[RMDB]
RNA sequence: GGGAACGACUCGAGUAGAGUCGAAAAGAUAUGGACGGUACAGCUCAACAGCCCAGGGUCUCGGAAACGAGACCUGGGACAUGAGCUCGUACCGUCCUAAGUCAAAAUCGAGCGUUCGCGCUCGAAACUUACCCGCAAUGUUCGCAUUGCGGGUAAGAAAAGAAACAACAACAACAAC
Reactivity to 2A3 in 0.01 (KOAc 150mM, MgCl2 10mM, bicine 150mM(pH8.5), 24C), signal-to-noise 1, nucleotides 027 to 126: g000a000u080a060u130g000g050a030c020g010g010u020a000c010a010g040c000u000c020a270a120c120a230g070c000c030c030a060g300g090g050u030c000u040c020g000g040a090a090a020c010g000a000g030a020c010c000u020g000g000g010a000c000a120u010g000a020g000c000u010c000g000u000a000c020c010g010u050c000c000u020a010a010g000u000c000a000a000a000a240u060c000g000a010g000c030g000u190u080c300g110c000g000c160u000c000g070a050a010a000
Reactivity to DMS in 0.01 (KOAc 150mM, MgCl2 10mM, bicine 150mM(pH8.5), 24C), signal-to-noise 1, nucleotides 027 to 126: g040a000u000a300u010g010g020a000c000g000g000u000a010c050a030g000c000u000c010a090a120c300a210g000c020c000c000a040g000g000g000u000c000u000c000g000g000a000a210a240c000g010a010g030a110c010c000u000g000g000g010a080c070a250u000g010a000g020c000u000c160g070u000a000c000c000g010u020c000c000u000a020a020g000u000c060a100a090a090a140u000c030g000a000g030c000g100u000u030c240g010c040g030c000u000c000g000a000a050a120